This 177-nucleotide RNA was probed chemically with 2A3 and DMS. The RNA was probed in 150 mM KOAc, 10 mM MgCl2 and 150 mM bicine (pH 8.5) at 24 C. For DMS, 12,751 sequencing reads were counted. 2A3 adducts were read by reverse transcription with SuperScript II with manganese. The data come from the RNA Mapping Database (RMDB), library OK2TRN. The 2A3 profile rests on 12,963 reads.
[RMDB]
RNA sequence: GGGAACGACUCGAGUAGAGUCGAAAAGCACCGCCGCAGUGCAGCCAACCGCCUACCGCACACACGCUGCCCGAGCCUGCUCCUGUCGCAGUCUUACCCGGUCCGGGGCCGGACCCGGGUAGGCGUAAGCAUCACUACUAUUCGUAGUAGUGAUGCUAAAAGAAACAACAACAACAAC
Reactivity to 2A3 in 0.01 (KOAc 150mM, MgCl2 10mM, bicine 150mM(pH8.5), 24C), signal-to-noise 3, nucleotides 027 to 126: g010c010a020c030c050g070c020c030g020c060a020g020u020g050c020a010g030c000c020a030a070c030c010g010c000c010u050a060c010c030g030c030a020c000a000c010a000c090g020c020u030g000c000c000c010g040a030g040c010c010u030g010c000u020c000c020u060g040u070c030g000c090a040g030u000c010u060u040a020c000c010c000g010g010u010c000c010g040g020g250g040c130c010g020g010a050c070c180c010g000g000g020u000a010g000g000c010g010u020a040
Reactivity to DMS in 0.01 (KOAc 150mM, MgCl2 10mM, bicine 150mM(pH8.5), 24C), signal-to-noise 7, nucleotides 027 to 126: g010c060a090c040c030g020c050c050g020c060a110g010u000g010c050a100g000c060c050a080a120c080c060g010c030c030u010a080c070c040g000c050a050c070a090c090a060c090g010c040u000g000c050c020c030g010a100g000c030c030u010g010c040u000c010c030u000g010u010c050g020c100a100g000u010c010u000u000a020c010c000c000g000g000u000c010c010g010g010g020g010c140c020g020g000a030c060c030c040g010g000g010u000a000g000g010c070g010u010a070